[RMDB]
An RNA of 177 nucleotides, treated with DMS and 2A3 and read out base by base. Conditions: 150 mM KOAc, 10 mM MgCl2 and 150 mM bicine (pH 8.5), 24 C. The 2A3 profile rests on 1,189 reads. The DMS profile rests on 1,121 reads. High 2A3 reactivity points to a flexible backbone, as in loops and unpaired stretches. Source: RMDB library M2PK90, as collected in RNAgym.

RNA sequence: GGGAACGACUCGAGUAGAGUCGAAAAGGAAAGAUGGAAACAUCAAAGACUCAACAGCAAAGUGUCAAGCUGAAAGACGUGGAACUGGCUAAUAAAAUUGGCCGGAUCAUACCACGAUGAAAAAAAAUCAAUCUAAAGACUUCGGUCUUUAGAUUGAAAAAGAAACAACAACAACAAC
Reactivity to DMS in 0.01 (KOAc 150mM, MgCl2 10mM, bicine 150mM(pH8.5), 24C), signal-to-noise 2, nucleotides 027 to 126: g010g000a110a120a080g010a000u010g010g000a160a090a160c010a000u010c020a070a080a100g000a130c050u030c130a100a050c060a020g030c040a130a050a090g010u000g010u040c090a020a100g000c010u000g010a180a170a110g000a110c020g050u010g010g000a070a110c020u010g000g020c010u010a000a000u010a030a040a060a300u010u000g000g020c010c010g000g020a050u000c090a100u000a170c010c000a020c010g010a080u010g000a000a000a010a020a110a020a060a050
Reactivity to 2A3 in 0.01 (KOAc 150mM, MgCl2 10mM, bicine 150mM(pH8.5), 24C), signal-to-noise 1, nucleotides 027 to 126: g090g000a160a060a060g010a020u050g000g070a010a050a000c010a000u010c000a030a190a040g020a030c050u010c050a020a060c010a030g040c020a180a040a000g050u160g070u140c030a020a020g010c010u020g060a150a090a000g060a020c020g000u000g000g020a080a010c010u010g000g030c030u000a010a010u090a140a180a030a070u060u050g000g000c030c000g020g000a060u080c010a020u100a110c010c010a010c010g010a060u110g040a110a000a000a020a000a000a000a050